[RMDB]
RNA sequence: GGGAACGACUCGAGUAGAGUCGAAAAGAGGCUCUUUCCCCCUGCGGAGAGCUGCUUCUUCUUGUUCUCGAGGGCCUUCCUUCUUCGGUGAUCCUGCCUCUCCUUGUCGGUGAAUCCUCCCCUGAGGUUGCCCCAAUGUUCGCAUUGGGGAAAAGAAACAACAACAACAAC
Reactivity to DMS in 0.01 (KOAc 150mM, MgCl2 10mM, bicine 150mM(pH8.5), 24C), signal-to-noise 7, nucleotides 027 to 129: g010a020g000g000c000u000c000u020u030u040c000c020c030c160c140u050g020c100g000g000a020g000a000g040c160u000g020c010u000u000c030u040u020c070u010u030g020u000u000c010u020c010g000a130g020g040g030c030c030u000u000c030c020u000u020c010u020u000c070g010g010u030g010a100u020c030c040u040g010c060c020u010c010u000c000c000u020u030g000u030c090g020g030u020g030a050a050u010c040c000u010c000c000c000c000u040g000a090g000g040u050u030g020
Reactivity to 2A3 in 0.01 (KOAc 150mM, MgCl2 10mM, bicine 150mM(pH8.5), 24C), signal-to-noise 9, nucleotides 027 to 129: g030a000g000g010c000u010c000u060u040u030c000c000c000c000c100u180g040c150g080g020a020g000a000g020c080u030g030c020u020u020c000u020u010c020u050u140g080u100u020c020u010c020g010a100g030g040g050c010c010u010u030c020c000u030u100c000u050u070c020g060g040u070g040a100u060c010c020u030g060c000c000u030c010u030c010c010u030u060g050u080c060g030g030u070g070a040a070u040c000c000u020c010c010c000c000u000g040a030g080g000u050u060g050
About this RNA:
An RNA of 170 nucleotides, treated with DMS and 2A3 and read out base by base. For DMS the reverse transcriptase was MarathonRT. For 2A3, 39,497 sequencing reads were counted. Conditions: 150 mM KOAc, 10 mM MgCl2 and 150 mM bicine (pH 8.5), 24 C. The data come from the RNA Mapping Database (RMDB), library 15KLIB.